Structure probing data (2A3) for a 207-nucleotide construct. Reactivities are given for positions 27 through 156. Source: RMDB library OK3TST, as collected in RNAgym. Conditions: 150 mM KOAc, 10 mM MgCl2 and 150 mM bicine (pH 8.5), 24 C. Reactivities are rounded to 0.1 and cut off at 0 and 3.

[RMDB]
RNA sequence: GGGAACGACUCGAGUAGAGUCGAAAAAUGAGUGACUCUCCAUCCGAAACGUACGUGUAGAUUCAACUUCCGAUGAUGCGUUCUGCUUGUGGCCUGACAGUAGGAUAUUGGCAUGCGAAAGGAUGGUCUAUGUCCCGUACGGAAACCAUCCCCAUCCACUGAAUCCGUGGUUCGCCACGGAUUCAGUAAAAGAAACAACAACAACAAC
Reactivity to 2A3 in 0.01 (KOAc 150mM, MgCl2 10mM, bicine 150mM(pH8.5), 24C), signal-to-noise 2, nucleotides 027 to 156: a000u200g000a010g080u070g010a000c000u010c000u000c070c010a080u050c060c030g090a110a070a000c070g010u070a000c030g040u140g030u100a020g040a050u130u190c070a080a080c050u070u010c070c090g130a110u240g030a010u030g010c000g030u050u010c010u000g040c040u070u170g000u030g090g140c030c040u050g000a030c000a000g090u120a070g000g040a020u030a080u140u140g030g000c020a000u040g000c020g040a060a040a000g060g000a060u030g000g010u000c000u030a100u060g090u050c000c090c120g000u040a040c060g000g010a130a060a000c000c060a030u030c000c010c030c010a050u050c100c010